[RMDB]
RNA sequence: GGGAACGACUCGAGUAGAGUCGAAAAGUGGUCGAGUGCGAAGCACUGGGGUAGAGAAAUAAAAAGAAAGAGACCUCCCCCGUCAGUCAGUCACUCUCUGUCUGAAUCUCUCUCUCAAAGACCACGACAUGGCUCAGCGAUUCGUCGCUGAGCCAUGAAAAGAAACAACAACAACAAC
Reactivity to 2A3 in 0.01 (KOAc 150mM, MgCl2 10mM, bicine 150mM(pH8.5), 24C), signal-to-noise 1, nucleotides 027 to 126: g000u000g010g000u000c010g040a050g020u020g040c110g190a200a040g010c020a000c010u000g000g000g000g030u120a000g050a000g030a060a040a000u210a140a200a000a000a000g120a010a030a000g080a000g000a060c000c030u020c020c020c000c000c020g040u050c000a020g000u070c000a000g020u000c010a020c150u000c040u000c010u020g020u080c030u020g010a050a050u000c020u000c000u000c000u000c000u000c020a040a080a060g000a000c000c000a000c010g000a010
Reactivity to DMS in 0.01 (KOAc 150mM, MgCl2 10mM, bicine 150mM(pH8.5), 24C), signal-to-noise 1, nucleotides 027 to 126: g000u000g000g000u010c000g000a010g040u000g040c000g000a260a180g020c000a000c000u000g030g000g000g000u000a030g000a010g010a040a110a140u040a100a060a060a120a150g000a070a160a060g000a080g000a000c190c090u010c010c050c020c000c030g000u100c110a100g000u000c100a000g000u010c100a030c110u010c010u000c000u000g010u010c010u090g000a190a080u000c040u000c000u000c000u000c010u030c060a180a040a030g040a000c000c000a020c030g040a220